[RMDB]
RNA sequence: GGGAACGACUCGAGUAGAGUCGAAAAUCAUCCAAGUUCGCUUGGAUGAAACGGUACUCAAGCUAAAAACGAUCCGAGGCAACAGUACCAUAAAAGGAUCGACAGCCUGCAAAUUCGUUUGCAGGAAAUGAACAUGCUCUUUCGAGAGCAUGUUCAUAAAAGAAACAACAACAACAAC
Reactivity to DMS in 0.01 (KOAc 150mM, MgCl2 10mM, bicine 150mM(pH8.5), 24C), signal-to-noise 2, nucleotides 027 to 126: u000c000a010u000c000c000a000a010g000u000u000c170g070c020u000u000g000g010a010u010g000a030a070a030c110g000g010u010a020c030u000c250a080a300g030c010u010a030a060a080a090a060c040g010a010u000c010c000g030a100g000g000c010a070a100c280a040g010u010a010c010c000a120u000a060a030a170a060g010g000a010u000c000g010a270c280a130g010c000c000u010g010c010a000a010a050u000u010c210g010u000u000u000g000c000a010g010g000a000a050
Reactivity to 2A3 in 0.01 (KOAc 150mM, MgCl2 10mM, bicine 150mM(pH8.5), 24C), signal-to-noise 1, nucleotides 027 to 126: u000c000a000u030c000c000a020a000g010u030u090c170g060c140u000u000g010g000a000u000g020a000a030a000c070g020g040u030a010c030u040c060a040a080g000c030u100a060a030a000a070a210c020g010a010u000c010c000g030a040g000g060c010a080a050c010a070g020u010a000c000c000a010u110a010a050a000a000g000g010a010u000c010g020a040c040a040g060c010c010u000g000c010a000a000a050u070u040c170g060u040u000u020g000c000a010g010g000a040a040